Overview
This 177-nucleotide RNA was probed chemically with 2A3. The reactions ran in a buffer of 150 mM KOAc, 10 mM MgCl2 and 150 mM bicine (pH 8.5), at 24 C.
[RMDB]
RNA sequence: GGGAACGACUCGAGUAGAGUCGAAAACAGCCGCUAAGCCAGGGCCACACCUGGGGGUGAUUUUAUGCCUCACCUCCAGUAGGCACCUUGGUCUCUUUGGGCUAAUCUCUGGCUCCUCUGCACUAACACCGUUGCAGGCUUUCGAGCCUGCAACGGUAAAAGAAACAACAACAACAAC
Reactivity to 2A3 in 0.01 (KOAc 150mM, MgCl2 10mM, bicine 150mM(pH8.5), 24C), signal-to-noise 1, nucleotides 027 to 126: c020a010g050c000c000g000c110u060a060a000g000c000c000a000g000g000g030c000c000a120c000a010c000c010u000g000g000g060g000g100u000g030a140u030u200u080u190a090u230g080c000c020u000c020a000c000c000u030c000c000a000g000u000a020g010g010c080a200c020c000u020u080g010g030u030c000u000c020u000u100u000g010g020g000c000u040a000a050u020c030u000c040u050g020g020c040u040c050c000u020c030u020g040c020a010c070u040a060a020c000
As a SHAPE reagent, 2A3 marks flexible, mostly unpaired nucleotides at the ribose 2'-OH.
2A3 adducts were read by reverse transcription with SuperScript II with manganese.